[RMDB]
RNA sequence: GGGAACGACUCGAGUAGAGUCGAAAAGAUGCGUCGUGGAAGUCCCGUGACGCAACAUCCACGGUCAGCGGAAGUACCUCGGUCGGCGGGGAGUUGCGUUGGGAGAUUCGGCGGGCUUUGCCGUGGGCCCCGUUGCAACGUUCGCGUUGUAACGGGGAAAAGAAACAACAACAACAAC
Reactivity to DMS in 0.01 (KOAc 150mM, MgCl2 10mM, bicine 150mM(pH8.5), 24C), signal-to-noise 2, nucleotides 027 to 126: g020a110u000g000c020g000u000c000g010u010g000g000a130a140g000u030c050c000c000g000u050g010a020c000g040c000a010a010c050a070u000c000c000a030c010g020g000u000c040a040g010c100g030g010a100a090g010u010a100c060c020u010c030g000g020u000c070g020g010c050g000g010g000g000a050g020u000u000g000c000g040u060u000g000g000g000a120g010a300u030u000c040g020g000c050g000g010g000c040u000u010u010g000c000c020g030u010g000g000g000
Reactivity to 2A3 in 0.01 (KOAc 150mM, MgCl2 10mM, bicine 150mM(pH8.5), 24C), signal-to-noise 2, nucleotides 027 to 126: g040a040u040g010c000g000u010c000g010u050g050g030a040a040g100u110c000c000c010g000u020g020a010c000g000c000a000a000c040a030u000c000c000a010c000g000g000u040c030a000g030c010g020g030a060a000g070u100a060c000c000u020c000g100g010u020c010g060g080c030g020g020g000g040a060g010u070u040g020c030g000u000u090g030g030g000a070g000a140u090u060c030g040g010c030g000g010g000c000u030u050u080g000c000c010g010u030g020g010g000
An RNA of 177 nucleotides, treated with DMS and 2A3 and read out base by base. The RNA was probed in 150 mM KOAc, 10 mM MgCl2 and 150 mM bicine (pH 8.5) at 24 C.